[RMDB]
RNA sequence: GGGAACGACUCGAGUAGAGUCGAAAACUUAGAUAGCCUCUCCUGGGAUGGUUCCUGUCCGUGUGGUGUCUCAUUCUCCAGCAGGCUAGCCAGGGCUUGUUCACGUGGCAGUUACGUGGGCUCAAGAGCCAGCUAAAGGAUUCGUCCUUUAGCUGGCAAAAGAAACAACAACAACAAC
Reactivity to 2A3 in 0.01 (KOAc 150mM, MgCl2 10mM, bicine 150mM(pH8.5), 24C), signal-to-noise 1, nucleotides 027 to 126: c040u110u070a030g000a080u070a020g130c000c000u020c000u000c000c010u010g050g020g030a100u040g060g000u060u050c010c000u090g110u070c040c030g080u090g080u100g060g000u040g030u020c010u040c050a100u190u000c000u010c010c000a010g030c030a030g000g000c000u010a020g100c000c050a060g030g000g010c020u060u070g000u090u050c020a020c090g040u030g060g000c070a090g040u150u070a040c050g010u010g010g000g040c080u100c070a040a000g110a000
Reactivity to DMS in 0.01 (KOAc 150mM, MgCl2 10mM, bicine 150mM(pH8.5), 24C), signal-to-noise 2, nucleotides 027 to 126: c060u010u000a070g000a100u000a030g020c020c010u000c060u000c120c010u010g000g010g010a060u010g000g010u000u000c020c040u000g020u000c030c080g030u000g010u010g000g010u000g020u000c010u000c060a100u010u010c070u010c020c080a110g040c180a070g010g010c040u010a030g010c060c040a080g000g000g000c120u010u000g010u000u000c010a020c040g020u000g000g010c110a080g020u010u000a030c080g030u000g010g000g000c010u010c100a050a090g020a190